[RMDB]
RNA sequence: GGGAACGACUCGAGUAGAGUCGAAAAGGGGUCGAAACGGCAAGAGGCCUAGGAGGUACAGCUGAAGCCUCCACGGCUGUACUACCCACCCUAGGCUCCCCACCUUGCCCUUUCGACGGAGGCACCCAAAAGUGUCAGUUGUUCGCAACUGACACAAUCAUAUUUGUGGAUUCGUCCACAAAUAUGAAAAAGAAACAACAACAACAAC
Reactivity to DMS in 0.01 (KOAc 150mM, MgCl2 10mM, bicine 150mM(pH8.5), 24C), signal-to-noise 3, nucleotides 027 to 156: g040g000g040g040u000c000g010a030a010a010c070g020g050c010a020a050g020a260g000g030c000c000u000a120g000g000a300g010g030u000a040c010a050g030c060u000g010a080a120g000c010c000u000c010c030a300c130g010g000c030u020g020u000a010c030u000a080c060c030c040a300c060c000c030u000a060g000g020c010u000c300c000c000c070a300c020c010u000u010g010c000c000c020u000u000u000c030g000a030c030g040g000a060g000g040c000a040c010c000c030a090a090a120a160g020u000g020u000c010a000g030u000u020g040u000u010c290g010c000a050a040c020u000g000a020c000a000c000a020a120
Reactivity to 2A3 in 0.01 (KOAc 150mM, MgCl2 10mM, bicine 150mM(pH8.5), 24C), signal-to-noise 2, nucleotides 027 to 156: g070g000g020g010u000c000g000a000a010a000c010g000g000c000a000a000g000a000g000g000c000c000u000a000g000g000a010g000g010u000a000c000a000g000c010u030g030a100a010g010c000c000u010c000c000a000c000g010g010c000u000g000u000a000c000u020a020c050c100c040a060c000c000c000u010a010g010g010c000u020c010c010c000c000a020c000c000u000u000g000c000c000c000u020u000u000c000g010a000c000g000g000a000g000g000c000a010c000c000c000a040a150a020a030g000u000g000u000c000a000g000u000u020g050u060u170c260g020c140a000a000c000u000g000a000c000a000c000a000a020